RNA sequence: GGGAACGACUCGAGUAGAGUCGAAAAGCCACUGUUCGCAGUGGCAAAUGGAAAGCCCCGUGUUGUGGUCUGACCCCCGACCCCGACCGCAACGCGGGGCAAUCCGAAAGGCUUCCUUCGGGAAGCCCAAAGGAUGACUCUUCGGAGUCAUCCUUUGAAAAGAAACAACAACAACAAC
Reactivity to DMS in 0.01 (KOAc 150mM, MgCl2 10mM, bicine 150mM(pH8.5), 24C), signal-to-noise 1, nucleotides 027 to 126: g000c030c000a000c010u000g020u000u000c190g000c000a010g020u000g000g030c030a000a010a070u000g000g010a020a060a300g020c000c000c000c000g040u000g010u000u000g040u010g000g020u000c010u000g000a300c070c010c010c040c000g010a160c050c040c040c040g000a000c000c000g000c030a010a000c030g020c010g000g000g000g020c050a000a010u010c010c010g010a090a110a080g000g010c000u000u000c000c000u010u020c200g020g010g000a010a000g000c010c000
The data come from the RNA Mapping Database (RMDB), library RFMREP.
The record gives the reactivity of an RNA of 177 nucleotides to DMS.
DMS (dimethyl sulfate) methylates the pairing face of unpaired adenines and cytosines.
Conditions: 150 mM KOAc, 10 mM MgCl2 and 150 mM bicine (pH 8.5), 24 C.